RNA sequence: GGGAACGACUCGAGUAGAGUCGAAAAGAUAUGGAUCCCUAGUGAGCCAACAGCUUAAUCGGAAACGAUUAAGACAUGGCUCCUAGUGGAUCCUAAGUCAAAAGAUAUGCACUUCGGUGCAUAUCAAGAUAUUGCUAAUGUUCGCAUUAGCAAUAUCAAAAGAAACAACAACAACAAC
Reactivity to DMS in 0.01 (KOAc 150mM, MgCl2 10mM, bicine 150mM(pH8.5), 24C), signal-to-noise 9, nucleotides 027 to 126: g000a060u010a300u010g000g010a010u000c000c000c000u000a010g010u020g010a010g030c000c000a030a110c300a210g000c000u000u000a000a010u000c000g010g000a170a120a230c000g010a010u000u000a000a010g010a040c110a190u000g010g010c000u000c000c000u000a000g010u020g050g010a010u000c000c000u000a000a100g010u010c040a090a080a140a160g000a010u000a000u000g000c000a010c000u000u020c260g030g010u000g000c000a000u000a000u000c000a050a070
Reactivity to 2A3 in 0.01 (KOAc 150mM, MgCl2 10mM, bicine 150mM(pH8.5), 24C), signal-to-noise 7, nucleotides 027 to 126: g030a020u070a040u180g010g000a000u040c030c000c000u020a030g050u080g300a000g000c010c020a080a050c100a260g070c010u010u010a010a000u000c010g040g020a090a050a060c010g000a010u010u030a010a000g040a090c010a050u050g000g000c010u010c000c000u000a000g000u130g020g000a010u000c000c000u000a020a010g030u010c030a100a010a040a090g000a000u000a000u010g010c000a000c020u040u130c300g160g000u000g000c000a000u010a000u000c000a000a000